Chemical mapping of a 177-nucleotide RNA with DMS and 2A3. Values cover nucleotides 27 to 126. Reactivities are rounded to 0.1 and cut off at 0 and 3. For 2A3, 4,733 sequencing reads were counted. Source: RMDB library OK1LIB, as collected in RNAgym. DMS adducts were read by reverse transcription with MarathonRT. As a SHAPE reagent, 2A3 marks flexible, mostly unpaired nucleotides at the ribose 2'-OH.

[RMDB]
RNA sequence: GGGAACGACUCGAGUAGAGUCGAAAACACAUGUUCUGCUGUUUCUUCACCGUCGACGCAGAACAAGCAUUGGGCUGACUCUACGUGACGGAACCGGAGUAGAUAGGCCCGGAAGCAGCCAUGGUCCAUCAUUAGGAGCGUUCGCGCUCCUAAUGAUAAAAGAAACAACAACAACAAC
Reactivity to DMS in 0.01 (KOAc 150mM, MgCl2 10mM, bicine 150mM(pH8.5), 24C), signal-to-noise 3, nucleotides 027 to 126: c070a060c220a050u000g000u020u000c060u000g000c010u070g010u000u000u000c080u010u020c180a190c050c090g000u010c030g020a090c070g000c000a040g000a060a030c100a060a020g030c150a180u000u050g010g020g000c030u000g010a240c220u000c000u000a000c020g010u030g000a140c030g000g000a070a080c160c020g000g000a300g020u000a020g000a070u020a180g000g020c040c010c000g020g000a110a110g010c040a100g010c300c060a060u000g010g030u040c140c070
Reactivity to 2A3 in 0.01 (KOAc 150mM, MgCl2 10mM, bicine 150mM(pH8.5), 24C), signal-to-noise 5, nucleotides 027 to 126: c070a000c010a050u040g020u030u050c010u010g030c040u070g080u070u060u050c050u140u160c050a090c080c020g100u110c050g090a030c010g000c010a010g040a010a000c000a010a020g010c020a120u110u300g050g050g000c000u020g020a020c030u000c000u020a020c000g090u090g070a030c010g040g030a020a010c130c040g060g040a100g020u110a030g000a090u050a060g000g050c000c000c000g000g010a040a000g000c010a000g000c030c010a030u030g030g000u010c000c000